[RMDB]
RNA sequence: GGGAACGACUCGAGUAGAGUCGAAAAGAAAAGCCAAGACAUAGGGCAUACUAUGAAAAGAAAACGGAAGAGAUUGCCGAUACAAUCAAAAGAAAAGGGAAGAGAUAGCCCAUACUAUCAAAAGAAAGGGUAUAGUAGUGUUCGCACUACUAUACCCAAAAGAAACAACAACAACAAC
Reactivity to DMS in 0.01 (KOAc 150mM, MgCl2 10mM, bicine 150mM(pH8.5), 24C), signal-to-noise 2, nucleotides 027 to 126: g000a110a160a150a230g000c020c010a030a190g010a240c140a060u010a050g000g010g000c060a030u000a030c070u000a000u000g000a120a040a170a080g010a060a050a090a180c060g000g000a090a050g000a110g000a040u030u000g000c000c000g000a230u000a030c090a000a030u000c090a020a030a070a020g000a000a050a030a160g010g000g000a060a060g000a130g000a040u000a000g000c030c080c050a100u060a040c020u000a030u020c010a010a070a100a120g000a040a080a050
An RNA of 177 nucleotides, treated with DMS and read out base by base. Source: RMDB library OK1LIB, as collected in RNAgym. Conditions: 150 mM KOAc, 10 mM MgCl2 and 150 mM bicine (pH 8.5), 24 C. For DMS the reverse transcriptase was MarathonRT. For DMS, 2,293 sequencing reads were counted. Values cover nucleotides 27 to 126.